[RMDB]
RNA sequence: GGGAACGACUCGAGUAGAGUCGAAAACUGUGGGUUGAGCAAAGCCGUGCUGGUAAAGGCCGCCAUGGUACUGGCGUUAUUUACCGGUAUCCUUGCGGCGGUUAACGUGAUGUGGGCCGGCCCCUGGUCGGCCUACGAGUUUCGACUCGUAGGCCGAAAAAGAAACAACAACAACAAC
Reactivity to 2A3 in 0.01 (KOAc 150mM, MgCl2 10mM, bicine 150mM(pH8.5), 24C), signal-to-noise 9, nucleotides 027 to 126: c030u030g020u160g060g020g020u040u080g050a100g070c040a090a090a010g010c020c010g060u090g030c020u040g000g040u090a070a060a030g090g030c020c000g010c000c010a030u090g120g060u150a080c080u010g010g020c030g050u100u080a120u070u070u090a020c000c000g000g000u030a050u090c010c030u030u080g020c010g010g000c010g000g050u050u070a050a010c030g070u100g110a130u200g050u070g040g030g000c010c000g000g000c000c000c000c010u050g050g000
Reactivity to DMS in 0.01 (KOAc 150mM, MgCl2 10mM, bicine 150mM(pH8.5), 24C), signal-to-noise 7, nucleotides 027 to 126: c030u010g000u010g010g010g020u010u010g010a110g000c090a070a090a130g010c070c070g010u010g000c030u000g010g020u000a030a040a080g000g010c200c010g000c000c020a020u020g010g010u020a060c090u000g000g000c150g020u020u040a060u020u030u040a100c000c010g000g010u000a010u030c050c070u010u010g020c060g010g000c000g010g000u010u010a050a060c070g010u010g010a090u030g020u020g000g000g000c020c010g000g000c010c000c020c030u010g010g010
This 177-nucleotide RNA was probed chemically with 2A3 and DMS. The RNA was probed in 150 mM KOAc, 10 mM MgCl2 and 150 mM bicine (pH 8.5) at 24 C. It was measured as part of the RMDB library OK1LIB. For DMS, 31,508 sequencing reads were counted.